An RNA of 207 nucleotides, treated with DMS and 2A3 and read out base by base. For 2A3, 3,792 sequencing reads were counted. The data come from the RNA Mapping Database (RMDB), library OK3TST. Values cover nucleotides 27 to 156. 2A3 adducts were read by reverse transcription with SuperScript II with manganese. The reactions ran in a buffer of 150 mM KOAc, 10 mM MgCl2 and 150 mM bicine (pH 8.5), at 24 C.
RNA sequence: GGGAACGACUCGAGUAGAGUCGAAAAUGUGAGAAAUAGACUGUCUGUGUCACCGUAGAUUGAUUUAAUGGUUUUGAAUUGAACUGGUAUACUAUCUUCAUCACUGUAUAGGAUUUCGCGCCACUCGCUCAUAAAGGCUCUUGUCCACGCUAAUACGUCCACAUACUCUAUUCGUAGAGUAUGUGGAAAAAGAAACAACAACAACAAC
Reactivity to DMS in 0.01 (KOAc 150mM, MgCl2 10mM, bicine 150mM(pH8.5), 24C), signal-to-noise 4, nucleotides 027 to 156: u000g040u000g000a080g000a120a100a060u000a080g010a120c050u010g010u000c010u000g010u000g020u000c040a070c060c070g030u010a090g000a120u000u010g010a120u000u010u000a040a090u000g030g040u010u000u000u010g020a090a120u010u000g010a050a080c040u020g020g010u000a050u000a090c060u000a080u000c030u010u010c020a060u000c030a070c020u010g010u000a100u010a080g010g010a160u000u010u000c020g020c030g010c030c040a060c020u010c050g010c060u000c050a090u000a040a100a080g010g010c040u000c040u000u000g020u000c010c030a070c090g010c040u000a030a100u000a060c110g010
Reactivity to 2A3 in 0.01 (KOAc 150mM, MgCl2 10mM, bicine 150mM(pH8.5), 24C), signal-to-noise 5, nucleotides 027 to 156: u080g010u030g020a060g060a050a110a060u130a040g050a060c040u020g020u060c010u010g070u030g030u070c050a040c030c040g010u030a030g020a120u020u100g030a040u060u090u130a110a090u120g050g000u030u080u100u070g110a100a070u100u040g020a040a030c000u020g020g030u040a060u040a100c040u030a050u050c040u050u010c020a060u030c010a010c040u030g060u110a040u090a090g030g020a060u070u120u030c070g000c010g000c020c010a060c030u010c020g030c000u050c030a030u090a060a040a010g020g000c000u000c010u040u040g030u000c020c000a050c050g020c010u020a060a020u050a130c040g030